[RMDB]
RNA sequence: GGGAACGACUCGAGUAGAGUCGAAAAUUUGCACGUGUCUGACCUGCCUACCGAAGAGAUGGACCUCGCCGAGCUGGACACAGGCGGCUUCGAGAUCCCGCACCUGGGCUGGGACUUGGACAAAGACGGUGACAUCGAAGGUAUCGAGGAGUACGUCCCCGUUAAUAUCAUUCGUGAUAUUAACGGGAAAAGAAACAACAACAACAAC
Reactivity to DMS in 0.01 (KOAc 150mM, MgCl2 10mM, bicine 150mM(pH8.5), 24C), signal-to-noise 1, nucleotides 027 to 156: u020u000u000g030c020a020c080g040u000g020u020c020u000g000a170c010c000u000g000c030c010u000a090c040c020g030a070a150g000a160g020a160u010g020g020a050c070c010u010c040g040c040c010g000a080g030c030u010g040g000a170c180a070c030a080g020g010c010g000g000c020u000u000c030g020a110g040a050u000c000c010c050g020c050a150c060c070u050g020g040g000c020u060g060g020g000a070c030u000u000g000g020a130c090a050a110a100g020a070c110g020g000u020g010a090c040a060u010c030g000a090a110g030g000u000a070u000c000g000a110g010g010a150g040u010a120c110g000u010c030
Reactivity to 2A3 in 0.01 (KOAc 150mM, MgCl2 10mM, bicine 150mM(pH8.5), 24C), signal-to-noise 4, nucleotides 027 to 156: u110u070u160g050c040a000c040g030u030g050u040c010u030g100a140c000c010u050g120c020c010u040a040c020c010g050a070a020g090a010g010a060u060g010g010a010c010c000u020c010g010c010c030g070a100g120c010u020g020g030a090c050a010c010a170g050g030c000g000g000c000u030u020c050g070a070g000a230u020c020c010c000g000c010a050c040c060u190g030g070g030c060u100g040g020g010a030c000u000u060g000g000a010c060a100a110a010g060a020c100g040g010u050g020a090c000a010u020c020g020a030a020g050g010u050a040u070c010g020a010g030g000a010g020u030a010c020g040u030c010
Chemical mapping of a 207-nucleotide RNA with DMS and 2A3. For 2A3, 2,603 sequencing reads were counted. Reactivities are given for positions 27 through 156. 2A3 adducts were read by reverse transcription with SuperScript II with manganese. For DMS, 2,717 sequencing reads were counted.